[RMDB]
RNA sequence: GGGAACGACUCGAGUAGAGUCGAAAAAAAGUGGACCAUGCAGGCUGCAGAGGGUGGGCCUUGGGCUGGCCGGGGUUGCUGGGUGGCCCCUUCCCCAUGGGCCUCCACAAGCACUCAGGCCACUGGCGGUUGUAGACAGGUUCGCCUGUCUACAACCAAAAGAAACAACAACAACAAC
Reactivity to DMS in 0.01 (KOAc 150mM, MgCl2 10mM, bicine 150mM(pH8.5), 24C), signal-to-noise 1, nucleotides 027 to 126: a040a030a110g080u010g000g000a190c040c080a030u020g000c100a070g010g020c110u000g020c010a100g000a120g000g010g000u000g000g000g030c070c050u010u000g020g000g000c140u000g020g000c010c010g010g000g020g000u000u030g030c030u010g000g000g010u000g020g000c000c000c000c080u000u050c010c000c030c000a140u020g000g000g000c000c000u010c000c010a030c090a070a020g000c030a000c070u000c020a030g030g010c000c020a020c000u000g000g000c240
Reactivity to 2A3 in 0.01 (KOAc 150mM, MgCl2 10mM, bicine 150mM(pH8.5), 24C), signal-to-noise 3, nucleotides 027 to 126: a010a000a000g130u070g020g000a090c020c040a050u120g020c030a020g090g000c010u060g000c030a030g040a090g060g050g030u120g020g010g050c030c000u040u060g090g030g000c100u050g000g010c000c010g000g000g000g020u300u150g010c000u010g000g000g020u010g000g000c010c000c000c000u100u130c010c010c000c000a030u030g000g000g030c010c000u030c010c010a150c050a060a010g000c010a000c000u020c010a030g010g000c000c010a050c010u010g000g000c020
Structure probing data (DMS and 2A3) for a 177-nucleotide construct. It was measured as part of the RMDB library OK1LIB. For DMS, 2,280 sequencing reads were counted. For DMS the reverse transcriptase was MarathonRT. Values are in units of 0.01, from 0 to 300, in steps of 10.